[RMDB]
Source information
Structure probing data (DMS and 2A3) for a 177-nucleotide construct.

RNA sequence: GGGAACGACUCGAGUAGAGUCGAAAACAGUUCAGAACAACCGCCGUCGACUUUGACGUCGGCCAGAUCGUCUCCGCGGGUGUGGCCCCGGUUGAUGAUCGCGACCGGAAUGCCCCGUGCCGCGGCGACCCUGGGCGUAGUUCGCUACGCCCAGGGUAAAAGAAACAACAACAACAAC
Reactivity to DMS in 0.01 (KOAc 150mM, MgCl2 10mM, bicine 150mM(pH8.5), 24C), signal-to-noise 1, nucleotides 027 to 126: c030a200g000u010u000c080a120g010a080a060c110a130a250c050c040g000c070c020g040u000c000g000a120c190u040u100u070g000a070c020g010u050c030g020g070c070c080a170g000a120u030c020g020u000c000u010c000c000g020c010g030g000g010u060g000u000g000g000c000c230c000c000g000g050u000u010g000a120u010g000a040u020c080g020c010g000a020c000c000g000g000a040a060u040g010c010c000c020c000g030u000g010c000c000g050c060g000g050c150g020
Reactivity to 2A3 in 0.01 (KOAc 150mM, MgCl2 10mM, bicine 150mM(pH8.5), 24C), signal-to-noise 2, nucleotides 027 to 126: c040a020g060u110u120c110a030g010a110a010c010a100a010c000c050g060c030c000g020u000c010g070a280c180u090u170u300g060a020c010g000u000c000g000g000c010c010a080g000a080u030c030g020u000c060u000c070c000g000c000g000g000g060u080g000u000g000g010c000c000c000c020g000g000u000u000g050a140u110g100a170u110c080g000c000g010a000c000c000g080g000a050a090u190g070c030c000c010c000g020u050g180c000c000g040c010g030g000c000g050
The DMS profile rests on 1,518 reads. For 2A3, 1,100 sequencing reads were counted.